[RMDB]
RNA sequence: GGGAACGACUCGAGUAGAGUCGAAAAGAUUAUGUGGGAGAGGCGCCCUUUCGUUUCGUCGGAUAAUUAAUUGCCAGUCGCUGGCUUUAGCGAUUUUGAUGUCAUCUGUAGCGAUGACUAUGCUACCUUAAGGUAUGAUCCGGAUACCACCGGUAAACACCACUAUGAUGUUCGCAUCAUAGUGGUGAAAAGAAACAACAACAACAAC
Reactivity to DMS in 0.01 (KOAc 150mM, MgCl2 10mM, bicine 150mM(pH8.5), 24C), signal-to-noise 2, nucleotides 027 to 156: g010a170u000u000a040u010g010u000g020g030g010a150g000a120g030g010c040g000c050c060c050u000u000u010c040g000u010u000u000c060g020u020c050g010g000a100u010a070a140u020u010a070a070u020u010g030c060c050a130g000u000c040g010c040u000g010g020c070u000u000u000a040g030c010g000a060u000u000u010u020g010a160u000g020u000c010a010u000c030u000g030u000a090g030c120g010a020u000g010a030c010u000a080u010g030c030u000a030c000c010u000u000a050a140g010g010u000a020u000g000a110u000c000c010g020g000a160u010a120c080c040a080c030c020g040g000u000a030a120a130
Reactivity to 2A3 in 0.01 (KOAc 150mM, MgCl2 10mM, bicine 150mM(pH8.5), 24C), signal-to-noise 4, nucleotides 027 to 156: g030a050u130u120a070u160g070u090g010g030g010a070g010a000g030g010c000g040c000c000c000u030u090u040c060g020u050u050u060c060g020u020c010g000g020a050u090a100a050u220u080a040a100u160u200g000c010c030a050g090u090c030g030c060u020g010g010c000u120u090u110a000g000c000g010a020u020u040u160u180g100a060u120g010u010c000a000u000c020u070g170u140a060g070c050g060a020u000g000a000c000u000a060u090g030c020u020a020c020c010u060u120a090a080g020g000u030a060u090g030a040u050c000c020g000g020a010u050a050c010c030a040c010c050g000g010u020a020a000a000